[RMDB]
RNA sequence: GGGAACGACUCGAGUAGAGUCGAAAAGGAUUUCUUGCUGUUGGAGUUCCGGCAAGGCACUGAACCUACUUAGGACUCAUUGGCCUAUCUGUAGAAUGGGAGCAAUCUAAUAUUUAUGGCCGAGUUGUGGCGAGAAUGAGAGAGCCUAUAAUAGAAAAGUAUCCUUUUACUUCGGUAAAAGGAUACUAAAAGAAACAACAACAACAAC
Reactivity to 2A3 in 0.01 (KOAc 150mM, MgCl2 10mM, bicine 150mM(pH8.5), 24C), signal-to-noise 1, nucleotides 027 to 156: g050g020a060u040u040u030c010u000u010g000c010u020g040u100u080g000g000a000g000u060u020c000c000g020g020c060a060a010g000g000c050a020c090u110g100a170a090c020c000u070a060c050u080u170a010g020g030a040c000u000c010a060u060u070g020g020c000c030u050a030u050c080u050g070u020a020g150a110a020u020g040g000g040a080g100c030a030a030u030c010u080a020a190u070a190u130u200u080a140u090g000g000c040c000g020a000g020u070u050g030u080g070g000c020g000a050g040a060a030u070g000a030g000a000g000a040g080c030c030u130a080u080a220a180u260a050g020a050a110a120
Reactivity to DMS in 0.01 (KOAc 150mM, MgCl2 10mM, bicine 150mM(pH8.5), 24C), signal-to-noise 1, nucleotides 027 to 156: g030g020a120u000u010u030c020u000u000g020c010u010g020u000u030g000g010a270g000u000u000c020c030g050g000c020a110a080g000g020c040a120c100u010g020a130a130c050c000u000a010c060u000u000a050g040g000a070c030u010c110a190u000u020g000g030c000c000u010a060u010c000u000g000u000a110g020a140a090u000g010g000g000a070g040c040a040a070u000c030u000a110a160u010a080u020u010u000a080u000g000g020c020c040g000a110g020u000u010g020u010g030g050c010g040a130g020a060a120u000g030a120g000a120g020a300g030c020c020u010a110u000a040a110u000a140g010a070a090a090